[RMDB]
RNA sequence: GGGAACGACUCGAGUAGAGUCGAAAAGGUUCCUGGUGUCUGAGGAUGGACCAGGAUGGCCUCGCUCACUCAAAUGGCUCAUUCAGGCUCGGGGCUGGCUUGGAAGGGACACCCGACUUGGGUCCUCCUAAUCCCGAUCAUUCGUGAUCGGGAUUAGAAAAGAAACAACAACAACAAC
Reactivity to DMS in 0.01 (KOAc 150mM, MgCl2 10mM, bicine 150mM(pH8.5), 24C), signal-to-noise 3, nucleotides 027 to 126: g000g000u000u000c010c000u010g010g010u000g000u000c030u000g010a100g020g010a090u010g000g000a060c010c010a050g000g010a060u000g010g010c010c020u000c120g000c110u000c060a080c080u020c090a060a120a100u000g000g010c040u000c030a100u000u000c070a050g000g010c020u000c070g020g000g000g010c070u000g000g000c020u000u000g000g000a120a070g010g000g000a070c070a060c030c020c070g010a070c060u000u000g000g010g010u000c020c050u000c040
Reactivity to 2A3 in 0.01 (KOAc 150mM, MgCl2 10mM, bicine 150mM(pH8.5), 24C), signal-to-noise 3, nucleotides 027 to 126: g060g000u050u060c010c020u020g010g010u030g060u000c040u050g130a130g170g080a140u130g040g050a030c000c000a000g030g000a030u090g090g000c000c010u000c020g010c010u040c020a090c020u090c030a040a080a240u130g080g000c020u040c070a040u130u010c030a020g040g010c000u010c050g100g000g000g000c090u040g020g010c000u020u030g030g020a050a040g060g000g000a010c010a020c020c030c030g050a050c020u040u040g070g010g000u020c020c010u030c010
An RNA of 177 nucleotides, treated with DMS and 2A3 and read out base by base. It was measured as part of the RMDB library OK2TRN.